[RMDB]
RNA sequence: GGGAACGACUCGAGUAGAGUCGAAAACAUCAUCCCUUCGGGGAUGAUGAAAGAUCGAAAGAUCAGGCUUACCGUAAUAAGCCUAAAUACGAGCGAAACGCAAAAGACCUGUGUUCGCACAGGUCAACCAGUUGUACAAGUUCGCUUGUACAACUGGAAAAGAAACAACAACAACAAC
Reactivity to 2A3 in 0.01 (KOAc 150mM, MgCl2 10mM, bicine 150mM(pH8.5), 24C), signal-to-noise 2, nucleotides 027 to 126: c010a000u010c000a000u000c000c010c000u000u050c190g070g000g000g000a000u000g000a000u000g000a010a010a000g010a010u020c010g020a050a040a000g020a000u010c050a000g000g000c000u020u020a060c100c060g100u040a040a080u060a100a000g000c000c020u040a060a070a000u220a070c070g000a060g050c040g070a250a090a050c100g000c090a030a040a020a070g000a000c000c000u000g000u000g030u050u060c140g020c060a000c000a000g000g000u000c000a000a000
Reactivity to DMS in 0.01 (KOAc 150mM, MgCl2 10mM, bicine 150mM(pH8.5), 24C), signal-to-noise 3, nucleotides 027 to 126: c000a010u000c010a000u000c010c000c000u010u020c250g060g010g020g000a010u010g010a010u000g010a030a100a080g030a040u000c000g010a150a080a200g000a010u000c040a030g010g010c000u000u000a060c140c160g000u030a080a220u000a010a030g000c000c000u010a050a020a110u010a100c070g010a130g020c040g020a040a060a080c130g030c110a060a060a070a070g000a010c000c000u000g030u000g000u000u030c230g030c010a000c020a000g010g000u000c000a010a060